[RMDB]
RNA sequence: GGGAACGACUCGAGUAGAGUCGAAAAGGGAAUUGAGGAUGCCAAUGCUGUUGACGAGGCCAUCAAGGCUGAGCUUGAGCGUCAGCGAGCAAAUCGCAUUGCUAAGCGAGCUAUCCAUCUAGCUGAGUCGAGAAGACUUGUUCGCAAGUCUUCUCGAAAAAGAAACAACAACAACAAC
Reactivity to DMS in 0.01 (KOAc 150mM, MgCl2 10mM, bicine 150mM(pH8.5), 24C), signal-to-noise 3, nucleotides 027 to 126: g000g010g000a120a080u000u020g020a090g000g030a020u000g000c010c040a090a180u010g020c040u000g000u000u010g000a080c080g000a110g000g040c070c040a090u020c180a090a090g000g010c090u010g010a110g000c050u030u020g030a080g000c000g010u000c080a090g020c000g000a040g000c080a040a010a170u000c290g010c010a080u000u000g020c070u000a060a100g000c040g010a030g020c020u020a080u000c070c020a070u000c100u010a030g030c000u020g010a100g000
Reactivity to 2A3 in 0.01 (KOAc 150mM, MgCl2 10mM, bicine 150mM(pH8.5), 24C), signal-to-noise 4, nucleotides 027 to 126: g110g010g050a040a040u110u120g050a090g050g000a020u020g010c000c020a060a040u050g010c000u020g000u070u000g020a040c010g030a040g000g080c010c040a070u080c090a100a060g070g000c090u070g040a040g020c040u080u120g040a010g030c020g020u010c020a010g020c070g090a030g000c040a100a080a080u040c010g000c020a030u020u120g040c020u040a100a010g020c010g040a000g000c010u050a030u070c020c000a050u020c020u050a000g030c050u070g050a000g100